An RNA of 177 nucleotides, treated with 2A3 and DMS and read out base by base.
DMS adducts were read by reverse transcription with MarathonRT.
The DMS profile rests on 1,256 reads.
The data come from the RNA Mapping Database (RMDB), library OK1LIB.
2A3 adducts were read by reverse transcription with SuperScript II with manganese.
The 2A3 profile rests on 1,687 reads.
RNA sequence: GGGAACGACUCGAGUAGAGUCGAAAAAUUUCUCAGCGGUCCCACUCGAUUUUGAAAAUGAGUUCAUUCAAAAACUAGAUAAUCUGGAAUGGAACAAACACUGGAAGCUGAACACUGAUAUGAUCGCACCAUUUCACGAUUUCGAUCGUGAAAUGGUAAAAGAAACAACAACAACAAC
Reactivity to 2A3 in 0.01 (KOAc 150mM, MgCl2 10mM, bicine 150mM(pH8.5), 24C), signal-to-noise 3, nucleotides 027 to 126: a000u020u080u060c020u000c010a040g010c040g050g080u000c010c000c010a010c010u020c020g170a140u080u000u080u260g090a120a140a090a070u160g060a050g080u020u090c010a000u060u010c040a050a060a040a070a080c120u080a030g040a230u120a160a090u140c030u120g030g000a050a060u000g050g000a020a000c040a020a140a000c040a050c140u060g050g000a070a010g050c040u090g020a130a010c060a010c050u020g010a090u040a080u120g100a060u070c040g000c040
Reactivity to DMS in 0.01 (KOAc 150mM, MgCl2 10mM, bicine 150mM(pH8.5), 24C), signal-to-noise 1, nucleotides 027 to 126: a080u010u000u020c000u000c000a060g000c000g000g000u000c040c100c050a120c050u020c080g000a050u020u020u100u000g000a020a010a060a010u050g010a090g000u000u010c060a110u050u020c160a000a030a050a050a110c110u000a080g000a080u020a120a100u000c150u030g000g010a060a020u000g000g020a090a000c090a090a110a110c030a030c050u000g000g000a050a050g000c060u050g000a060a100c220a050c100u010g020a090u000a020u000g050a030u050c100g040c270